RNA sequence: GGGAACGACUCGAGUAGAGUCGAAAAGAUAUGGACCGUCUACCCACCGGCCGCUGCUUACGGGAAGCGCUUCGGAAACGAAGCGAACUACUUCUCGUAAGCAGCGGCCGAGGACGGUCCUAAGUCACAGUAUUAUAUCGUUCGCGAUAUAAUACUGAAAAGAAACAACAACAACAAC
Reactivity to DMS in 0.01 (KOAc 150mM, MgCl2 10mM, bicine 150mM(pH8.5), 24C), signal-to-noise 1, nucleotides 027 to 126: g020a130u000a260u010g000g010a010c000c010g010u010c020u000a130c030c020c040a300c120c000g000g050c000c010g120c000u000g000c000u040u000a030c020g010g000g000a020a000g030c040g000c000u000u000c000g040g000a120a090a300c060g020a040a000g000c000g000a040a060c060u020a300c010u000u000c000u000c000g070u000a010a020g000c000a000g020c050g060g000c000c000g000a000g020g010a000c000g000g000u000c010c010u000a000a070g010u010c130a220